[RMDB]
RNA sequence: GGGAACGACUCGAGUAGAGUCGAAAAAGCGACUACGGUCGCAUGGUUUGGGACUCAGGAUGUGGUCAAGUGUUGUUAAGGCAUGUUCAGGAACAAUACUUGACCACAUUUUGAAUUCCAAACCAAACUCUCCAUACGUUUUCGAACGUAUGGAGAGAAAAGAAACAACAACAACAAC
Reactivity to DMS in 0.01 (KOAc 150mM, MgCl2 10mM, bicine 150mM(pH8.5), 24C), signal-to-noise 1, nucleotides 027 to 126: a080g020c000g000a000c000u000a070c210g040g030u000c010g030c000a050u010g010g010u000u000u000g000g020g000a000c040u000c020a030g000g000a000u000g010u020g000g000u000c000a000a010g040u000g020u000u000g000u000u000a060a090g010g000c060a180u020g020u020u000c030a080g010g030a040a030c000a000a000u000a010c010u000u000g000a010c030c010a000c000a000u000u000u000u000g010a010a020u000u000c010c000a010a010a010c000c010a000a050a100
Reactivity to 2A3 in 0.01 (KOAc 150mM, MgCl2 10mM, bicine 150mM(pH8.5), 24C), signal-to-noise 5, nucleotides 027 to 126: a000g000c000g000a000c000u040a020c230g110g000u010c000g010c000a020u030g010g000u000u000u000g000g000g010a000c010u020c000a000g010g000a010u000g010u010g000g000u000c000a000a010g000u010g010u000u010g000u020u050a120a110g130g000c160a170u160g090u190u190c080a090g200g070a010a010c000a000a010u010a000c000u000u000g000a000c000c000a000c000a000u000u000u000u000g000a000a000u000u000c000c000a000a000a000c000c000a000a000a000